Conditions: 150 mM KOAc, 10 mM MgCl2 and 150 mM bicine (pH 8.5), 24 C. Structure probing data (2A3 and DMS) for a 177-nucleotide construct. As a SHAPE reagent, 2A3 marks flexible, mostly unpaired nucleotides at the ribose 2'-OH. It was measured as part of the RMDB library M2PK50. For 2A3 the reverse transcriptase was SuperScript II with manganese.
[RMDB]
RNA sequence: GGGAACGACUCGAGUAGAGUCGAAAAGGUGCGAUGUUCGCAUCGCACCAAAGAUGCUCAAAAUGACGCAAACAACGGCGUCAGCGUGAGCAAACGCGGAAAAAACCACUUGGUUCGCCAAGUGGAACAUUCUGUAGAUGUUCGCAUCUACAGAAUGAAAAGAAACAACAACAACAAC
Reactivity to 2A3 in 0.01 (KOAc 150mM, MgCl2 10mM, bicine 150mM(pH8.5), 24C), signal-to-noise 6, nucleotides 027 to 126: g000g000u010g000c000g010a010u010g020u050u050c100g000c070a000u010c000g000c000a000c000c000a010a000a000g000a010u030g000c000u000c000a050a060a020a120u040g010a000c010g000c020a070a210a260c080a180a140c180g080g000c000g000u000c000a000g000c010g070u050g000a000g000c000a010a090a020c140g000c090g100g030a050a070a010a020a010a080c010c000a000c000u000u000g020g010u030u030c070g020c080c000a000a010g000u010g000g000a000a000
Reactivity to DMS in 0.01 (KOAc 150mM, MgCl2 10mM, bicine 150mM(pH8.5), 24C), signal-to-noise 8, nucleotides 027 to 126: g010g030u000g010c000g010a010u000g010u000u010c200g030c000a020u000c000g000c000a010c000c000a020a040a070g010a200u010g010c000u000c000a020a040a070a100u000g000a010c000g000c000a050a080a120c280a080a120c240g000g000c000g000u000c000a010g000c300g000u010g000a010g000c010a020a040a080c150g020c140g000g000a010a040a060a080a120a130c010c000a010c000u000u000g000g010u000u010c180g010c000c000a000a010g000u000g000g000a020a070
DMS adducts were read by reverse transcription with MarathonRT.